[RMDB]
RNA sequence: GGGAACGACUCGAGUAGAGUCGAAAAACAUUGGCCUUCGGGCCAAUGUACUGGAAAUAAAGCCGAAAGGCUACGCAUUCCUAAUUUGGCGAAAGCCUGCGAGAUUAUGUAAGUUCGCUUACAUAAAUACGUUAACGUUCUUCGGAACGUUAACGUAAAAAGAAACAACAACAACAAC
Reactivity to 2A3 in 0.01 (KOAc 150mM, MgCl2 10mM, bicine 150mM(pH8.5), 24C), signal-to-noise 1, nucleotides 027 to 126: a020c000a010u000u010g000g000c010c030u000u060c250g040g000g030c000c020a000a000u000g000u000a010c020u020g090g120a040a080a110u150a020a200a000g050c020c010g010a100a050a010g010g040c030u000a000c020g010c010a080u010u020c010c000u060a090a230u260u300u130g000g030c020g010a090a020a000g050c000c010u030g100c060g070a160g020a100u100u000a010u000g020u000a000a000g000u000u100c210g000c020u000u000a000c000a010u000a000a080a010
Reactivity to DMS in 0.01 (KOAc 150mM, MgCl2 10mM, bicine 150mM(pH8.5), 24C), signal-to-noise 1, nucleotides 027 to 126: a050c000a020u000u020g000g030c000c000u000u010c140g040g000g030c000c020a000a000u000g010u000a060c150u000g020g020a020a080a080u000a070a120a080g000c020c000g000a110a090a160g000g000c000u000a040c200g030c130a170u000u000c000c010u010a080a120u010u000u010g010g030c000g000a100a110a140g000c000c000u000g000c180g000a130g000a180u000u020a010u000g000u000a000a010g000u000u000c210g010c000u000u000a000c000a010u000a010a040a110
Record summary:
The record gives the reactivity of an RNA of 177 nucleotides to 2A3 and DMS. 2A3 adducts were read by reverse transcription with SuperScript II with manganese. For DMS, 834 sequencing reads were counted.